[RMDB]
RNA sequence: GGGAACGACUCGAGUAGAGUCGAAAAGGUGUAACAAAGGCCUUUAUGAAGGCCGGCAAAGGAAGCCCCAUCUGCUUAGGCAAGUCAAAAUUUGAGCCUUUGCAGCAGACUGUCUCCGGGAGGUGCCAACAUGCCUAAAGUUCGCUUUAGGCAUGUUAAAAGAAACAACAACAACAAC
Reactivity to 2A3 in 0.01 (KOAc 150mM, MgCl2 10mM, bicine 150mM(pH8.5), 24C), signal-to-noise 3, nucleotides 027 to 126: g040g030u080g010u070a110a060c060a060a100a020g020g010c030c000u090u030u020a300u250g220a030a010g000g000c000c000g000g010c010a030a040a020g050g060a040a030g000c010c010c000c010a040u010c010u010g000c000u010u010a010g020g000c040a110a010g120u110c090a080a120a210a300u120u160u200g060a050g000c000c000u000u010u030g000c010a010g040c010a010g000a010c020u070g020u080c020u060c040c020g010g020g000a020g000g030u060g010c040c000
Reactivity to DMS in 0.01 (KOAc 150mM, MgCl2 10mM, bicine 150mM(pH8.5), 24C), signal-to-noise 7, nucleotides 027 to 126: g010g020u000g020u000a110a150c100a060a110a140g010g000c010c000u000u000u010a110u020g010a080a030g000g020c000c010g010g020c140a020a060a080g020g000a080a140g010c030c010c030c050a120u010c020u000g000c000u000u000a020g010g020c010a130a090g010u010c130a040a070a110a190u000u000u000g010a160g010c000c000u000u000u000g010c020a030g010c300a050g010a080c060u000g010u000c030u000c030c030g000g010g000a100g010g000u000g010c050c070